[RMDB]
RNA sequence: GGGAACGACUCGAGUAGAGUCGAAAAUGGGCUACCAGUAAGCGAAAAAUGAUACAGGACGAAAAAAACAUAAUUCGAGAUUUUCCAGGAUGGAUUUUUUUAGGUAUCUAUCAAAACUAUUCUGAUGCAACGUAGAGCACGUUCGCGUGCUCUACAAGUUGUAACAAAACUUCGGUUUUGUUACAACAAAAGAAACAACAACAACAAC
Reactivity to 2A3 in 0.01 (KOAc 150mM, MgCl2 10mM, bicine 150mM(pH8.5), 24C), signal-to-noise 3, nucleotides 027 to 156: u050g020g000g010c030u090a070c030c020a040g010u060a030a020g030c010g060a090a040a010a030a030u080g030a040u090a080c040a050g060g040a020c030g050a050a020a010a020a000a070a020c040a030u150a070a060u110u070c020g010a020g000a200u030u120u170u010c040c010a000g010g000a010u000g060g000a030u000u010u020u000u010u040u070a050g000g050u140a060u150c020u020a010u020c020a000a030a000a030c030u040a040u110u020c020u030g060a080u110g030c040a060a020c070g000u000a000g000a000g000c000a000c010g020u020u020c060g000c000g070u000g000c000u000c000u000a000c000a000a000
Reactivity to DMS in 0.01 (KOAc 150mM, MgCl2 10mM, bicine 150mM(pH8.5), 24C), signal-to-noise 1, nucleotides 027 to 156: u000g050g050g010c020u000a020c050c010a040g010u010a080a100g000c040g000a010a110a130a070a120u010g010a150u000a070c040a060g010g000a120c050g000a010a000a030a030a100a170a060c070a090u010a120a130u000u000c050g000a180g000a170u000u000u000u000c040c020a090g030g020a030u000g030g010a020u000u000u000u000u000u000u000a070g010g010u010a060u010c010u000a060u010c020a050a020a030a010c040u000a090u000u000c030u000g010a070u000g040c020a050a090c110g020u000a000g010a040g030c010a010c000g080u000u000c300g070c010g040u000g030c010u010c010u000a000c010a020a070

Structure probing data (2A3 and DMS) for a 207-nucleotide construct.
DMS adducts were read by reverse transcription with MarathonRT.
The RNA was probed in 150 mM KOAc, 10 mM MgCl2 and 150 mM bicine (pH 8.5) at 24 C.
2A3 adducts were read by reverse transcription with SuperScript II with manganese.
It was measured as part of the RMDB library M2RFOK.